[RMDB]
Chemical mapping of a 177-nucleotide RNA with DMS and 2A3.
RNA sequence: GGGAACGACUCGAGUAGAGUCGAAAAGAUGUGGGUGUCGAUGCCGCCGGCGGUGACGAUCAUGCCUUCGCCGGCGAUGAUCUCGGUGGCGGCGCCGAUAACGAUGUCGACGCCGGGCUGGAUGUCCCUAUUAAGGUCACUUCGGUGACCUUAAUAGAAAAGAAACAACAACAACAAC
Reactivity to DMS in 0.01 (KOAc 150mM, MgCl2 10mM, bicine 150mM(pH8.5), 24C), signal-to-noise 4, nucleotides 027 to 126: g010a070u000g000u000g020g010g020u000g000u000c010g010a080u010g010c040c010g010c000c000g000g000c010g000g020u010g020a050c120g010a070u010c130a080u010g010c000c010u000u000c300g010c150c110g000g000c010g000a000u010g030a050u010c020u000c020g000g000u000g010g000c030g010g010c000g030c020c020g000a060u010a060a100c110g000a060u000g000u010c010g010a050c070g020c020c010g020g010g000c070u000g000g010a130u000g000u000c010c040
Reactivity to 2A3 in 0.01 (KOAc 150mM, MgCl2 10mM, bicine 150mM(pH8.5), 24C), signal-to-noise 1, nucleotides 027 to 126: g040a030u110g020u110g090g050g000u050g020u020c030g000a020u040g010c030c000g000c000c000g020g030c010g040g040u110g060a040c030g000a040u110c040a040u150g000c010c010u040u050c030g040c020c010g030g010c010g000a010u010g020a000u000c020u010c040g230g000u000g000g060c060g020g010c010g000c000c010g010a010u030a120a020c080g050a040u130g000u000c000g010a020c040g000c010c010g000g070g000c040u050g030g000a060u080g030u030c020c000
The RNA was probed in 150 mM KOAc, 10 mM MgCl2 and 150 mM bicine (pH 8.5) at 24 C. The DMS profile rests on 5,288 reads. For DMS the reverse transcriptase was MarathonRT. For 2A3 the reverse transcriptase was SuperScript II with manganese. It was measured as part of the RMDB library RFMREP.